[RMDB]
RNA sequence: GGGAACGACUCGAGUAGAGUCGAAAAAAUUAAGUGAAUUAAAAUAAACAUGAAGAUCAAGAACAAGAUACAAACGGCAAGUAUCGUUCGAUCCAUGAAAUAAAUAAUAUGACAAAGCCGAAUAUAACAUUAGAAUAUUGUUCGCAAUAUUCUAAUGAAAAGAAACAACAACAACAAC
Reactivity to DMS in 0.01 (KOAc 150mM, MgCl2 10mM, bicine 150mM(pH8.5), 24C), signal-to-noise 1, nucleotides 027 to 126: a080a020u020u000a020a120g000u000g000a070a040u000u000a030a000a040a070u000a070a120a100c010a030u000g010a100a070g020a010u000c030a160a180g020a010a000c020a130a080g010a010u000a020c000a060a110a060c150g000g030c080a110a080g000u000a000u000c020g000u000u000c000g000a020u000c020c000a010u020g000a010a090a030u000a030a090a080u000a020a040u000a090u020g000a040c000a030a050a140g000c000c020g030a140a080u020a020u010a020a120
Reactivity to 2A3 in 0.01 (KOAc 150mM, MgCl2 10mM, bicine 150mM(pH8.5), 24C), signal-to-noise 1, nucleotides 027 to 126: a000a000u300u250a050a030g010u010g010a060a030u150u130a010a260a000a090u120a100a030a000c000a000u000g070a140a080g000a010u000c030a040a040g000a010a010c050a140a100g000a000u000a000c000a030a250a030c010g050g000c000a010a170g000u000a000u010c030g010u010u000c010g000a000u000c000c020a010u060g000a090a280a000u050a000a070a040u300a000a030u300a260u140g000a050c000a030a090a000g000c000c000g020a040a000u300a050u070a030a020